[RMDB]
RNA sequence: GGGAACGACUCGAGUAGAGUCGAAAAUUGGUGACCCAGUAACAGCAUCACUGGCUGAUGUUAAAAGAAUGAUAAAGGUUGGAAUGCUGGAUGAGAGAAUUCUACAACGUAUCAUGCACCAGGACAAUACUAGACCAGGAUUCGUCCUGGUCUAGUAAAAAGAAACAACAACAACAAC
Reactivity to DMS in 0.01 (KOAc 150mM, MgCl2 10mM, bicine 150mM(pH8.5), 24C), signal-to-noise 6, nucleotides 027 to 126: u030u000g030g000u010g000a200c020c000c010a130g010u020a090a120c190a030g020c020a090u000c050a070c030u020g000g000c100u000g000a090u010g020u000u020a040a100a080a100g010a090a040u000g010a000u000a040a030a140g000g000u000u010g000g000a060a020u000g010c020u000g000g000a130u030g010a150g000a050g000a060a040u010u010c010u000a110c070a060a030c070g000u000a020u000c010a020u000g020c010a020c010c010a060g000g000a080c160a060a150
Reactivity to 2A3 in 0.01 (KOAc 150mM, MgCl2 10mM, bicine 150mM(pH8.5), 24C), signal-to-noise 5, nucleotides 027 to 126: u080u070g030g000u070g030a060c020c010c020a010g060u080a050a030c030a070g000c000a010u040c020a040c070u140g140g000c080u020g010a030u030g010u050u040a040a140a030a090g160a020a080u040g020a010u060a060a080a010g160g000u000u010g000g020a050a030u040g050c010u060g010g160a130u230g050a080g000a000g010a110a040u030u020c020u070a090c020a060a010c030g020u020a040u050c040a020u070g060c010a010c000c020a020g050g060a020c040a110a030